[RMDB]
RNA sequence: GGGAACGACUCGAGUAGAGUCGAAAACAAAUCACUGACUUGGUACCUUUUUGGGAGCACCUGGUUGUCUCUAGCCUUGUGAUUCAGGAGUAUUAAUAUAAGAAGAAACCAUAUUUGCUCUUGAUGCUAAUUUUUGAACAUCCCUCCUGUACUAGAACCUAAUAAAUCGUUUCGACGAUUUAUUAGGAAAAGAAACAACAACAACAAC
Reactivity to 2A3 in 0.01 (KOAc 150mM, MgCl2 10mM, bicine 150mM(pH8.5), 24C), signal-to-noise 4, nucleotides 027 to 156: c020a000a080a040u110c050a030c090u080g080a030c030u030u050g010g050u080a050c010c020u050u120u070u180u270g080g020g010a080g020c010a020c020c030u020g040g020u050u050g080u040c030u000c030u080a030g000c000c000u070u060g050u040g060a050u030u000c000a000g000g020a000g040u010a020u190u080a080a030u080a020u040a160a060g100a060a020g060a120a160a020c060c020a010u020a050u040u040u030g000c010u000c000u010u000g020a020u040g000c020u050a150a140u070u050u070u120u160g050a060a010c010a060u030c000c010c000u040c000c020u050g010u050a040c000u030a020g100a050a020
Reactivity to DMS in 0.01 (KOAc 150mM, MgCl2 10mM, bicine 150mM(pH8.5), 24C), signal-to-noise 1, nucleotides 027 to 156: c050a080a110a130u010c030a080c060u000g000a130c060u010u000g000g030u000a040c020c050u000u010u020u000u020g000g000g020a100g020c010a060c020c030u000g000g040u000u000g010u000c020u000c030u000a070g000c030c030u000u020g020u000g010a140u010u000c000a020g000g000a030g020u000a070u000u000a050a070u000a050u000a110a110g000a120a220g020a170a160a160c070c040a090u000a200u010u000u000g030c040u000c020u000u000g010a050u010g050c020u000a020a110u010u010u010u000u000g050a050a050c030a070u000c020c010c000u010c020c020u020g050u000a050c080u010a120g010a110a260
Chemical mapping of a 207-nucleotide RNA with 2A3 and DMS. 2A3 adducts were read by reverse transcription with SuperScript II with manganese. The RNA was probed in 150 mM KOAc, 10 mM MgCl2 and 150 mM bicine (pH 8.5) at 24 C.